An RNA of 177 nucleotides, treated with DMS and 2A3 and read out base by base. For DMS, 2,459 sequencing reads were counted. Values cover nucleotides 27 to 126.
[RMDB]
RNA sequence: GGGAACGACUCGAGUAGAGUCGAAAAUCGACGGCGGGGAACAUUACUCGCUGCGUGGUCCCCCGUAGCGCCUCCUUCUGCCAGCACACCUUUGUGCACAAGCUGCCCGUAGUCAUGGUCGUCGAAGGUCCAAAUCAACAUUCGUGUUGAUUUGGACAAAAGAAACAACAACAACAAC
Reactivity to DMS in 0.01 (KOAc 150mM, MgCl2 10mM, bicine 150mM(pH8.5), 24C), signal-to-noise 3, nucleotides 027 to 126: u020c030g010a110c030g010g020c000g040g000g020g000a090a210c150a140u010u020a080c050u000c020g010c020u010g000c020g030u010g020g020u000c020c000c000c300c040g000u000a070g010c030g000c100c020u000c030c020u000u000c050u000g020c040c060a120g000c020a020c050a100c220c130u000u000u010g020u000g010c010a110c140a070a100g020c040u000g000c020c010c010g010u000a060g000u000c070a050u000g010g040u000c000g010u010c020g010a130a140g000
Reactivity to 2A3 in 0.01 (KOAc 150mM, MgCl2 10mM, bicine 150mM(pH8.5), 24C), signal-to-noise 2, nucleotides 027 to 126: u070c020g050a050c010g000g040c030g070g030g010g050a080a040c020a060u140u220a050c070u010c030g020c020u010g000c010g050u070g040g040u050c000c000c000c000c040g040u030a020g010c000g050c010c010u050c010c070u040u080c030u030g060c030c020a020g000c010a010c000a020c020c080u060u160u200g010u020g060c000a010c020a070a030g000c000u060g000c040c000c020g040u050a020g030u040c040a030u050g110g000u000c010g000u020c000g020a020a030g040